[RMDB]
RNA sequence: GGGAACGACUCGAGUAGAGUCGAAAAUGCACGGUGACUUGAUUACACUCUCUCAUUCAUGGUCACUUCCGAAGCGCUUUAGUGCCUUCCGUCCCUAAACCGCCAACAGCCAGAACGGCUUCUCCCCGAUAUAGUAUAGCUUCGGCUAUACUAUAUCAAAAGAAACAACAACAACAAC
Reactivity to DMS in 0.01 (KOAc 150mM, MgCl2 10mM, bicine 150mM(pH8.5), 24C), signal-to-noise 9, nucleotides 027 to 126: u000g010c090a080c130g010g010u000g010a040c020u000u000g000a060u000u010a120c190a100c070u010c040u000c040u000c050a070u000u000c040a030u000g010g010u000c020a020c020u000u000c080c060g000a080a080g010c110g010c050u000u000u010a080g020u000g010c030c030u000u000c040c050g010u010c010c010c010u000a030a070a090c070c040g010c030c040a050a090c140a070g010c020c030a110g010a090a150c120g010g000c030u000u000c050u000c010c010c020c210
Reactivity to 2A3 in 0.01 (KOAc 150mM, MgCl2 10mM, bicine 150mM(pH8.5), 24C), signal-to-noise 8, nucleotides 027 to 126: u090g010c030a020c100g040g010u030g010a020c020u050u050g030a040u140u200a060c060a040c060u090c000u010c010u020c060a050u100u020c010a030u110g060g000u020c000a010c010u060u020c030c020g050a050a020g020c010g010c080u110u160u180a120g050u080g060c010c000u030u040c030c010g050u040c000c000c000u050a110a080a030c020c030g030c050c010a030a030c000a100g000c010c000a040g040a150a040c050g030g010c000u040u000c020u010c000c010c010c020
This 177-nucleotide RNA was probed chemically with DMS and 2A3.
For 2A3, 18,657 sequencing reads were counted.
It was measured as part of the RMDB library RFMREP.